[RMDB]
RNA sequence: GGGAACGACUCGAGUAGAGUCGAAAAAUGUUAGACGCAGGAGACGCCUUCCAAGGUUUACCACUUUCAAACCAGUCUAAAGGUGAAGAAAUGGCUAAAGCAAUGAAUGCAGUAGGUUAUGAUGCUAAUUCCACAUGCCUUUCGAGGCAUGUGGAAUAAAAGAAACAACAACAACAAC
Reactivity to DMS in 0.01 (KOAc 150mM, MgCl2 10mM, bicine 150mM(pH8.5), 24C), signal-to-noise 2, nucleotides 027 to 126: a060u040g020u000u000a030g000a100c020g050c020a040g000g000a040g010a120c140g020c000c030u000u000c080c100a130a230g010g020u000u000u020a160c020c020a040c100u000u000u010c020a030a300a150c030c020a060g000u010c270u100a000a040a100g010g000u000g000a230a090g000a020a010a020u000g020g000c160u000a010a030a010g020c040a060a150u040g000a080a080u020g000c020a060g020u000a050g000g000u000u000a030u040g000a080u000g000c040u010a040
Reactivity to 2A3 in 0.01 (KOAc 150mM, MgCl2 10mM, bicine 150mM(pH8.5), 24C), signal-to-noise 1, nucleotides 027 to 126: a000u130g020u000u000a040g000a000c000g000c000a010g000g000a000g000a000c040g030c000c000u090u060c000c010a150a000g200g060u150u000u030a100c000c130a000c030u000u030u000c000a060a060a060c030c040a000g080u080c060u180a300a120a130g030g000u080g110a120a170g000a210a260a000u090g110g000c050u040a040a040a040g030c000a140a000u040g140a000a130u190g110c000a000g000u100a030g040g000u060u060a030u300g090a130u090g000c000u000a030